RNA sequence: GGGAACGACUCGAGUAGAGUCGAAAAUGUCGAAAACACGCCGUUGCUCUUCAUUUAGCAUGUUCGAUAACCUCUCCUCUUUUUUUCUCGGUCCUGAUCGUACUCAUCCGACUUGUAUGGGAGCGACAUUCGGUGAGCACUUCGGUGCUCACCGAAUAAAAGAAACAACAACAACAAC
Reactivity to 2A3 in 0.01 (KOAc 150mM, MgCl2 10mM, bicine 150mM(pH8.5), 24C), signal-to-noise 2, nucleotides 027 to 126: u090g000u020c040g040a000a000a040a050c050a000c040g000c000c080g030u020u060g070c000u040c090u180u120c030a120u090u090u120a040g060c000a040u110g010u010u000c020g060a070u050a160a120c030c020u000c000u000c040c000u000c050u000u050u000u000u050u100u020c020u040c110g010g000u030c000c000u030g000a090u020c010g000u060a090c030u000c040a080u000c000c050g030a130c160u020u110g090u140a060u030g000g000g060a060g020c000g000a000c000

Structure probing data (2A3) for a 177-nucleotide construct. Source: RMDB library OK1LIB, as collected in RNAgym.